Chemical mapping of a 177-nucleotide RNA with DMS and 2A3. The DMS profile rests on 1,021 reads. For 2A3 the reverse transcriptase was SuperScript II with manganese. The reactions ran in a buffer of 150 mM KOAc, 10 mM MgCl2 and 150 mM bicine (pH 8.5), at 24 C. The data come from the RNA Mapping Database (RMDB), library RFMREP.
RNA sequence: GGGAACGACUCGAGUAGAGUCGAAAAAUUUCAAAUCAUACAAAAUAGGAUUAGUCUGCCCAUUUUCUAUAUACGUAAGCGCUAUUUCUGAAGAAUAGCUUAUUUGAUCAUGGCAAAGGCACGGCUACUUUACUUUACGGUUCGCCGUAAAGUAAAGAAAAGAAACAACAACAACAAC
Reactivity to DMS in 0.01 (KOAc 150mM, MgCl2 10mM, bicine 150mM(pH8.5), 24C), signal-to-noise 2, nucleotides 027 to 126: a120u020u010u000c040a040a040a070u030c080a080u000a140c040a090a060a070a180u030a110g010g010a110u010u010a010g010u000c030u000g030c050c010c090a130u000u030u000u000c020u020a000u000a090u000a060c190g040u000a040a050g020c110g020c070u010a010u000u020u000c030u000g000a070a200g000a030a030u000a050g020c000u000u000a010u000u000u010g000a020u000c180a000u000g010g010c150a030a040a080g010g000c040a020c130g020g010c030u000a050
Reactivity to 2A3 in 0.01 (KOAc 150mM, MgCl2 10mM, bicine 150mM(pH8.5), 24C), signal-to-noise 1, nucleotides 027 to 126: a060u070u110u050c040a030a080a040u090c080a100u160a280c100a100a160a080a150u160a090g110g000a040u090u000a020g000u000c020u000g010c060c040c010a000u020u020u040u020c050u030a050u000a020u020a170c070g000u000a070a000g150c050g040c170u040a020u040u030u000c040u170g150a150a040g030a040a010u010a010g000c000u030u000a000u020u080u090g010a010u000c000a000u010g040g000c020a010a020a050g080g000c020a000c110g030g000c000u000a050